[RMDB]
RNA sequence: GGGAACGACUCGAGUAGAGUCGAAAAUAUUCCGGUGUGGGAUAGUUGGUAAUAUGUAACGCUAAUUGCAUAAGAUUGUAGGACGGAAUUUACAGUCUUGGUUUUUAUAAACCUGAAACUAAGUAAGAAUAGUAAGAGCGGUUCGCCGCUCUUACAACCAUUGAUAGAGGUUCGCCUCUAUCAAUGGAAAAGAAACAACAACAACAAC
Reactivity to DMS in 0.01 (KOAc 150mM, MgCl2 10mM, bicine 150mM(pH8.5), 24C), signal-to-noise 2, nucleotides 027 to 156: u000a080u000u000c010c000g030g040u000g020u010g000g000g010a050u010a030g010u000u000g000g010u000a080a120u000a030u010g020u000a070a100c090g020c080u000a040a130u010u000g000c010a100u000a070a070g000a050u000u000g040u000a040g040g000a290c050g000g020a110a300u000u010u000a020c030a040g020u000c010u000u000g010g010u020u000u010u000u000a130u010a110a030a040c030c010u000g010a100a040a110c030u000a050a110g020u000a060a130g020a100a140u000a120g000u000a010a020g000a010g030c000g000g010u000u000c300g030c030c000g050c000u000c000u000u000a000c000a060a170
Reactivity to 2A3 in 0.01 (KOAc 150mM, MgCl2 10mM, bicine 150mM(pH8.5), 24C), signal-to-noise 2, nucleotides 027 to 156: u100a040u050u040c010c000g070g010u110g010u160g040g030g030a080u060a140g010u020u090g030g030u030a080a070u040a090u120g050u040a080a000c030g020c130u080a100a050u100u050g010c030a040u020a090a010g010a030u000u010g030u040a020g030g070a030c110g000g030a040a040u060u100u090a030c010a020g000u040c000u000u030g010g010u010u060u000u000u090a250u120a060a020a030c010c020u030g010a040a030a030c040u040a020a060g070u060a060a030g060a060a110u060a110g000u010a000a000g000a000g000c000g020g030u010u060c190g010c040c000g000c000u000c000u000u000a000c000a000a010
Record summary:
The record gives the reactivity of an RNA of 207 nucleotides to DMS and 2A3. It was measured as part of the RMDB library M2RFPK. For 2A3, 1,190 sequencing reads were counted.